[RMDB]
RNA sequence: GGGAACGACUCGAGUAGAGUCGAAAAGAGUAGGCUGCGCCUCCCCCCACACACACCAAGACAGAACUCUGGGUCACAAAAGGGCCAGCACCUCAGAACCGACGGGAAGCGAGGAUUUGGGACAUUUCAGCUAAAUUACGUUCGCGUAAUUUAGCUGAAAAGAAACAACAACAACAAC
Reactivity to 2A3 in 0.01 (KOAc 150mM, MgCl2 10mM, bicine 150mM(pH8.5), 24C), signal-to-noise 2, nucleotides 027 to 126: g090a050g130u140a090g000g050c020u040g000c030g000c040c010u010c000c040c020c000c000c000a020c000a000c000a000c000a010c020c060a040a030g040a060c050a010g170a170a130c020u010c010u070g120g000g050u030c050a030c090a060a110a070a040g000g050g000c000c000a000g030c030a080c010c020u070c000a010g020a030a030c020c040g060a030c030g080g000g000a050a000g050c000g020a020g020g020a030u030u030u080g030g030g060a050c070a070u000u000u000
This 177-nucleotide RNA was probed chemically with 2A3. The RNA was probed in 150 mM KOAc, 10 mM MgCl2 and 150 mM bicine (pH 8.5) at 24 C. 2A3 adducts were read by reverse transcription with SuperScript II with manganese.